This 207-nucleotide RNA was probed chemically with 2A3.

[RMDB]
RNA sequence: GGGAACGACUCGAGUAGAGUCGAAAAAGCUCUGUGGCGCUCUGUCCUCUGUCCUAUGUCGAUCGGGCGUCCGCGCUAAGCUCGGCGUCAAUAUGGGCAUUCCAGGGGAGCCCGGAGUGGCCAGGUUGUCCAAGGAGGAACGCACCGGGCGAGGCCCGAUCAAAAGCAAGUUCGCUUGCUUUUGAUCAAAAGAAACAACAACAACAAC
Reactivity to 2A3 in 0.01 (KOAc 150mM, MgCl2 10mM, bicine 150mM(pH8.5), 24C), signal-to-noise 1, nucleotides 027 to 156: a010g040c040u010c030u070g080u180g010g020c030g010c020u040c070u050g140u050c020c010u000c020u020g100u050c030c080u080a030u100g050u030c070g040a150u020c060g020g020g030c000g120u110c000c070g000c010g010c010u130a070a030g000c000u000c010g000g040c000g030u010c040a150a050u040a070u190g030g000g010c000a040u060u090c030c000a030g000g160g000g000a100g040c000c060c030g080g030a080g010u200g050g000c000c000a040g010g000u030u090g000u050c020c000a040a110g090g030a090g000g080a120a020c030g000c070a020c050c060g010g000g010c010g010a090g000g070c000c060c000

Conditions: 150 mM KOAc, 10 mM MgCl2 and 150 mM bicine (pH 8.5), 24 C. As a SHAPE reagent, 2A3 marks flexible, mostly unpaired nucleotides at the ribose 2'-OH. The data come from the RNA Mapping Database (RMDB), library ARCHII. For 2A3, 755 sequencing reads were counted.